[RMDB]
RNA sequence: GGGAACGACUCGAGUAGAGUCGAAAACAGGUGGCUGUACCCUUGGCCAAGGGUAGGUGUGGCAGUGGUGUCUGCUGUCACUGUGCCCUCAUUGGCCCCCAGCAAUCAGACUCAACAGACGGAGCAACUGCCAUCCGAGGCUCCUGAACCAGGGCCAGAUUACUAGUGGUUUCGACCACUAGUAAUCAAAAGAAACAACAACAACAAC
Reactivity to 2A3 in 0.01 (KOAc 150mM, MgCl2 10mM, bicine 150mM(pH8.5), 24C), signal-to-noise 5, nucleotides 027 to 156: c050a030g010g030u030g040g000c040u060g020u160a090c000c040c010u070u130g020g000c030c050a020a020g000g010g000u040a040g060g160u030g010u010g040g010c020a020g010u070g070g130u150g060u110c070u090g000c010u000g020u030c000a000c010u010g060u070g020c000c000c000u030c050a140u030u070g000g000c000c000c000c010c010a040g010c020a010a080u090c030a040g120a200c030u040c100a030a080c020a130g100a060c080g040g020a040g020c020a050a080c070u080g000c020c010a020u010c020c030g030a050g030g000c010u040c190c010u040g060a030a050c100c030a010g010g000g000c010c000a010
Reactivity to DMS in 0.01 (KOAc 150mM, MgCl2 10mM, bicine 150mM(pH8.5), 24C), signal-to-noise 1, nucleotides 027 to 156: c060a030g010g000u000g030g000c000u000g020u000a160c000c000c010u000u020g010g000c060c030a080a040g000g020g020u000a130g000g020u000g030u010g000g020c040a020g030u010g010g020u010g000u000c040u000g000c020u000g010u000c020a030c010u010g000u000g000c020c030c020u000c060a300u000u000g010g020c000c000c010c030c030a100g100c070a080a130u020c060a080g010a060c000u000c010a090a070c080a110g000a080c290g010g020a080g000c010a020a110c030u000g010c020c030a060u000c030c050g010a140g020g030c020u000c010c000u000g000a120a090c070c060a050g000g020g040c030c000a150

This 207-nucleotide RNA was probed chemically with 2A3 and DMS. For 2A3, 4,329 sequencing reads were counted. The DMS profile rests on 3,077 reads. Conditions: 150 mM KOAc, 10 mM MgCl2 and 150 mM bicine (pH 8.5), 24 C. It was measured as part of the RMDB library OK3TST. DMS adducts were read by reverse transcription with MarathonRT.